[RMDB]
RNA sequence: GGGAACGACUCGAGUAGAGUCGAAAAUGCGGCAACAUGGAGCCUGACGUGGGUUUUUACGCUGGCAGAAGAGCGCGCGUUCAUCCAGUGGUUGCGUAGCCCGAGUUACCUCAACAAAGCAAACAACUGGUUCACCAUGGCGAUUGACCUCGGAGGCCCGAUAGCAAUUAUUCGUAAUUGCUAUCGGAAAAGAAACAACAACAACAAC
Reactivity to 2A3 in 0.01 (KOAc 150mM, MgCl2 10mM, bicine 150mM(pH8.5), 24C), signal-to-noise 3, nucleotides 027 to 156: u180g030c060g010g000c010a080a010c010a140u080g040g030a020g040c040c040u070g020a050c030g040u120g000g040g000u040u080u050u070u120a060c060g010c050u050g060g010c040a040g030a140a010g030a040g010c100g000c010g000c010g090u070u070c040a080u070c010c010a090g080u070g090g040u070u040g010c010g030u040a040g020c000c030c040g010a020g000u070u120a040c030c040u040c020a060a060c020a060a180a040g040c030a040a060a130c020a080a050c060u060g010g000u080u040c040a060c070c000a070u090g020g000c030g020a020u030u110g030a050c010c000u040c050g000g040a010g000g020c000
Reactivity to DMS in 0.01 (KOAc 150mM, MgCl2 10mM, bicine 150mM(pH8.5), 24C), signal-to-noise 2, nucleotides 027 to 156: u000g010c030g030g000c040a040a090c060a090u000g010g000a130g000c060c010u000g020a110c070g030u000g000g020g030u000u000u000u010u000a050c080g040c020u000g030g010c030a170g010a070a130g000a070g030c000g020c030g000c040g040u000u000c090a170u000c030c030a130g010u000g000g020u000u000g010c040g030u020a180g000c000c000c050g000a150g010u020u000a120c060c030u020c020a080a080c080a080a100a150g000c020a090a060a050c000a060a120c030u010g010g000u030u010c090a050c030c040a060u010g020g050c020g020a110u000u000g020a050c000c000u020c060g020g000a080g040g000c090
This 207-nucleotide RNA was probed chemically with 2A3 and DMS.
Source: RMDB library OK3TST, as collected in RNAgym.
Conditions: 150 mM KOAc, 10 mM MgCl2 and 150 mM bicine (pH 8.5), 24 C.
For 2A3 the reverse transcriptase was SuperScript II with manganese.